Overview:
Chemical mapping of a 207-nucleotide RNA with 2A3.

RNA sequence: GGGAACGACUCGAGUAGAGUCGAAAACAGGUCGAUAGUACCAAUAACCCUGGUACCAAUAAGGUACUAUCGACCAUUUAGCUCUUCUUCUACAACACGCUCGCUGAAGAAGAGCAUUUCUGGUACCAGGGGAGCGAGCGGAAGGCCGAGAGGCCGACAGUAUACGCCUCUUCGGAGGCGUAUACUGAAAAGAAACAACAACAACAAC
Reactivity to 2A3 in 0.01 (KOAc 150mM, MgCl2 10mM, bicine 150mM(pH8.5), 24C), signal-to-noise 1, nucleotides 027 to 156: c040a020g010g020u000c010g000a000u020a030g030u020a000c020c040a130a130u080a140a150c000c000c000u000g000g000u020a000c030c030a120a150u180a140a140g000g000u000a000c000u000a000u000c000g000a000c000c000a000u030u010u070a070g000c000u010c000u000u000c000u010u020c040u110a080c040a200a050c110a100c140g050c000u000c000g000c000u000g000a000a000g000a000a000g000a000g000c010a000u010u150u020c040u030g000g000u000a010c000c000a000g000g000g000g000a000g000c020g010a000g000c000g040g060a110a040g000g000c000c000g020a020g030a050g050g000c020c010g010a000
The data come from the RNA Mapping Database (RMDB), library OK3TST. Conditions: 150 mM KOAc, 10 mM MgCl2 and 150 mM bicine (pH 8.5), 24 C. For 2A3 the reverse transcriptase was SuperScript II with manganese.